[RMDB]
RNA sequence: GGGAACGACUCGAGUAGAGUCGAAAACUGUUCCAUUCUUUCUUACCUUGUGGCCGGCAUGGUCCCAGCCUCCUCGCUGGCGCCGGCUGGGCAACAUUCCGAGGGGACCGUCCCUCGGUAAUGGCGAUAACUCGCUAGUUCGCUAGCGAGAAAAGAAACAACAACAACAAC
Reactivity to DMS in 0.01 (KOAc 150mM, MgCl2 10mM, bicine 150mM(pH8.5), 24C), signal-to-noise 7, nucleotides 027 to 129: c040u050g000u040u030c020c050a060u060u030c070u000u000u000c070u010u050a180c100c040u000u000g070u070g070g020c000c040g040g000c000a080u050g020g010u010c300c020c000a010g000c010c100u030c130c110u000c160g050c030u010g000g000c250g060c000c030g040g030c020u010g000g030g030c050a090a100c030a020u000u000c000c010g010a010g040g020g000g010a120c200c300g060u070c000c000c000u010c000g000g010u050a020a030u020g030g010c120g000a100u000a120a180
Reactivity to 2A3 in 0.01 (KOAc 150mM, MgCl2 10mM, bicine 150mM(pH8.5), 24C), signal-to-noise 5, nucleotides 027 to 129: c060u080g050u070u020c040c020a070u110u040c050u050u100u020c000u110u080a140c040c010u040u050g050u180g160g020c010c010g040g000c030a130u170g060g020u100c020c000c000a000g000c000c020u110c040c000u070c080g000c020u020g020g000c050g000c010c000g030g030c000u020g000g000g000c020a060a020c000a040u010u000c000c000g020a000g020g010g010g040a110c070c000g260u270c010c000c010u000c000g000g000u020a010a000u010g000g000c020g040a030u050a120a060